[RMDB]
RNA sequence: GGGAACGACUCGAGUAGAGUCGAAAACUGCAAGCUGAGGGUGAAGACGGCCAGAACUUGGAGAAGAGACGGAAUCUUCUGAACUGCCUCAUCGUCCGAAUCCUCAAGGCCCAUGGAGAUGAGGGGCAGAUGUUCCUAUGUUCGCAUAGGAACAUCUAAAAGAAACAACAACAACAAC
Reactivity to DMS in 0.01 (KOAc 150mM, MgCl2 10mM, bicine 150mM(pH8.5), 24C), signal-to-noise 4, nucleotides 027 to 126: c030u000g010c130a120a170g010c080u000g020a050g000g000g040u010g000a210a080g010a070c030g020g010c070c020a050g010a110a080c200u010u010g000g010a070g020a080a070g000a040g010a140c080g030g000a120a130u000c050u010u000c130u000g000a060a160c030u000g000c030c010u000c040a050u000c030g000u000c000c000g000a160a040u010c030c000u000c070a060a070g000g010c020c010c040a080u010g020g000a130g010a090u000g000a070g000g000g000g000c180
Reactivity to 2A3 in 0.01 (KOAc 150mM, MgCl2 10mM, bicine 150mM(pH8.5), 24C), signal-to-noise 3, nucleotides 027 to 126: c000u040g040c020a010a000g040c010u030g030a010g000g000g000u030g030a030a030g010a020c010g040g020c020c030a060g030a190a110c070u110u130g070g040a050g010a050a040g020a010g030a010c110g030g090a100a130u040c000u100u030c020u070g050a090a080c020u080g070c000c020u060c030a080u080c020g050u030c000c010g030a020a000u000c000c000u020c030a000a030g030g000c000c010c010a030u130g080g000a150g000a050u070g040a090g000g000g010g000c000

This 177-nucleotide RNA was probed chemically with DMS and 2A3. DMS adducts were read by reverse transcription with MarathonRT. Reactivities are rounded to 0.1 and cut off at 0 and 3. Source: RMDB library OK2TRN, as collected in RNAgym. The RNA was probed in 150 mM KOAc, 10 mM MgCl2 and 150 mM bicine (pH 8.5) at 24 C.